[RMDB]
RNA sequence: GGGAACGACUCGAGUAGAGUCGAAAAGUCACGUCCAGCCCCUCCCCGUGUCUAGUGAAGGGGGACUCCGGAACUCCUUGCAUGUUAGGGACGAAGCCGCCCCCGGGCGCUCCCCUCUGUCCACCUUGUACAUCGUGGUUCGCCACGAUGAAAAGAAACAACAACAACAAC
Reactivity to DMS in 0.01 (KOAc 150mM, MgCl2 10mM, bicine 150mM(pH8.5), 24C), signal-to-noise 6, nucleotides 027 to 129: g020u030c060a120c140g040u020c020c060a110g000c050c000c010c020u000c010c020c020c050g030u000g020u000c040u030a100g020u000g040a110a080g000g000g000g000g000a130c040u000c040c030g000g000a060a080c090u000c000c040u010u020g040c080a070u060g040u000u000a090g030g030g000a010c080g030a090a090g010c020c000g040c000c010c030c040c090g050g000g000c100g030c080u000c000c000c000c020u030c050u030g000u000c040c010a050c130c050u050u040g000u030a140
Reactivity to 2A3 in 0.01 (KOAc 150mM, MgCl2 10mM, bicine 150mM(pH8.5), 24C), signal-to-noise 7, nucleotides 027 to 129: g010u030c030a000c110g050u040c020c010a020g010c000c000c010c000u010c000c000c020c000g040u070g040u070c050u050a080g040u060g150a050a050g020g010g010g000g000a030c040u030c060c000g050g000a030a040c010u030c010c020u060u070g090c060a070u130g070u120u170a060g050g000g000a010c020g050a060a000g020c000c000g040c010c000c000c010c020g000g000g000c040g010c010u030c010c010c000c000u040c020u020g050u020c020c000a090c040c000u010u060g020u050a050

An RNA of 170 nucleotides, treated with DMS and 2A3 and read out base by base. For 2A3, 18,949 sequencing reads were counted. 2A3 adducts were read by reverse transcription with SuperScript II with manganese. For DMS, 50,476 sequencing reads were counted.